An RNA of 207 nucleotides, treated with 2A3 and read out base by base.
2A3 adducts were read by reverse transcription with SuperScript II with manganese.
The RNA was probed in 150 mM KOAc, 10 mM MgCl2 and 150 mM bicine (pH 8.5) at 24 C.
It was measured as part of the RMDB library RNAMAK.
RNA sequence: GGGAACGACUCGAGUAGAGUCGAAAAGGGGUCCAGCAUCGAUCGACGUACCAAGCGACGAUCUAUACUGAAGCCUCCACGGUAUAGGGAGCUUGACGUCGGGAGCUGGACGGAGGCACCCAAAAGACGAGAACAGCCUUCGGGCUGUUCUCGUCAACACCUAGACUUAGUUCGCUAAGUCUAGGUGAAAAGAAACAACAACAACAAC
Reactivity to 2A3 in 0.01 (KOAc 150mM, MgCl2 10mM, bicine 150mM(pH8.5), 24C), signal-to-noise 1, nucleotides 027 to 156: g060g020g010g030u020c000c000a000g010c010a020u300c030g030a000u010c000g010a000c010g020u030a150c150c080a050a010g010c010g270a300c000g000a040u000c000u000a000u000a000c000u020g040a140a010g000c000c010u020c000c000a010c010g020g020u000a000u010a000g010g000g000a000g010c010u000u010g010a000c010g000u010c010g000g000g010a020g000c000u000g010g000a000c020g000g010a000g000g000c000a010c000c000c010a000a180a010a030g000a000c000g000a010g020a020a010c070a000g010c000c160u220u270c300g130g000g000c020u020g000u000u000c000u010c020g000u000c010a000a000